The data come from the RNA Mapping Database (RMDB), library OK2TST. The record gives the reactivity of an RNA of 177 nucleotides to DMS and 2A3. Reactivities are rounded to 0.1 and cut off at 0 and 3.

RNA sequence: GGGAACGACUCGAGUAGAGUCGAAAAGCAUGGAAUCAUCUUGCACAUGGUCAUAUUUGUAUGGGUCUGUUUUUGGAUUCUUGAUUCUGUUCUGUUGAUCUUCGUGUCUGUCCUUGUGCCAGUACCAGACACUAUGCCUUUUCGAAGGCAUAGUGUCAAAAGAAACAACAACAACAAC
Reactivity to DMS in 0.01 (KOAc 150mM, MgCl2 10mM, bicine 150mM(pH8.5), 24C), signal-to-noise 2, nucleotides 027 to 126: g010c050a040u010g020g020a070a040u000c030a020u000c030u000u000g050c080a060c070a030u010g000g010u010c030a060u010a110u000u010u010g010u020a080u010g020g000g010u000c040u010g030u000u000u000u000u000g010g010a080u000u000c030u000u000g010a040u000u010c050u010g010u000u000c010u000g000u010u000g010a040u000c090u000u010c050g010u000g010u000c030u000g020u000c030c020u000u000g020u000g010c050c020a070g020u000a110c070c060a120
Reactivity to 2A3 in 0.01 (KOAc 150mM, MgCl2 10mM, bicine 150mM(pH8.5), 24C), signal-to-noise 2, nucleotides 027 to 126: g020c040a020u090g020g090a060a030u110c010a030u040c010u070u080g000c020a020c010a080u070g040g000u030c010a030u030a120u190u190u280g240u060a100u100g050g010g000u000c000u030g130u040u050u090u080u110g050g000a040u000u040c000u040u080g060a050u050u000c000u080g030u060u000c000u060g160u030u060g010a020u000c060u060u020c060g020u030g090u040c040u040g020u030c010c000u040u080g030u090g070c050c060a030g030u040a050c040c000a020
2A3 adducts were read by reverse transcription with SuperScript II with manganese.